[RMDB]
RNA sequence: GGGAACGACUCGAGUAGAGUCGAAAAUAAAUUACUGCGUGGAAUGCCGAUUCCAGAUUUUGAUUUAGACGAUUUUAUUGACGCACCAUGCUAUUGCUUUAACGCUGAGGGUGAUGCAUCCUGGUCUGACGUAGUGAGUUCGCUCACUACAAAAGAAACAACAACAACAAC
Reactivity to DMS in 0.01 (KOAc 150mM, MgCl2 10mM, bicine 150mM(pH8.5), 24C), signal-to-noise 9, nucleotides 027 to 129: u030a010a050a060u030u030a070c080u040g030c090g050u020g010g010a050a030u000g040c070c090g030a070u000u020c010c010a090g020a040u000u000u000u000g030a100u030u020u020a100g010a120c080g000a080u020u010u020u020a080u020u020g020a140c210g000c040a050c030c030a010u000g010c020u030a010u030u020g020c040u020u010u030a090a090c170g040c010u000g030a050g010g020g020u010g000a010u030g020c020a100u020c020c060u020g010g020u020c020u000g000a190c180
Reactivity to 2A3 in 0.01 (KOAc 150mM, MgCl2 10mM, bicine 150mM(pH8.5), 24C), signal-to-noise 9, nucleotides 027 to 129: u060a000a040a010u120u110a080c050u050g060c040g070u040g010g030a130a090u080g080c050c020g050a050u070u020c030c030a050g050a080u090u090u050u120g160a170u050u060u150a090g030a090c110g030a070u030u060u050u090a150u050u210g030a040c030g000c010a010c020c010a010u050g020c030u070a080u110u150g020c020u100u090u210a120a030c090g010c030u020g040a050g030g030g010u010g020a020u040g000c010a030u020c000c010u050g020g020u020c030u010g010a030c060
Structure probing data (DMS and 2A3) for a 170-nucleotide construct.
For DMS, 81,777 sequencing reads were counted.
2A3 adducts were read by reverse transcription with SuperScript II with manganese.
For 2A3, 59,601 sequencing reads were counted.
The reactions ran in a buffer of 150 mM KOAc, 10 mM MgCl2 and 150 mM bicine (pH 8.5), at 24 C.